[RMDB]
RNA sequence: GGGAACGACUCGAGUAGAGUCGAAAAAGUGAGUAUGGCUCGUUACGACGAGCCAUACUCACAACGGUUUUCCUAAAUCGUCGUGAGACGGACCUUGGAAAACCUAGUAUUUAAAGAACUAGGUCAAAAAACGGGUGGAGCUUCGGCUCCACCCGAACAUUUAGCAAAGGUUCGCCUUUGCUAAAUGAAAAGAAACAACAACAACAAC
Reactivity to 2A3 in 0.01 (KOAc 150mM, MgCl2 10mM, bicine 150mM(pH8.5), 24C), signal-to-noise 1, nucleotides 027 to 156: a030g010u010g000a010g000u020a040u050g000g020c000u000c020g010u040u090a070c260g030a010c010g000a060g000c000c000a010u000a010c010u010c000a000c000a010a000c000g000g010u010u010u000u010c010c000u000a000a000a030u100c010g010u010c030g000u040g140a150g000a040c010g000g000a010c000c000u010u000g010g000a000a000a000a040c000c000u000a000g010u010a040u070u110u130a100a160a060g020a020a030c030u010a030g010g000u020c050a000a000a000a140a070a070c040g000g020g000u000g000g010a010g080c040u080u070c300g150g000c030u000c010c010a000c020c000c000g000a000a010
This 207-nucleotide RNA was probed chemically with 2A3.
For 2A3 the reverse transcriptase was SuperScript II with manganese.
Source: RMDB library M2RFOK, as collected in RNAgym.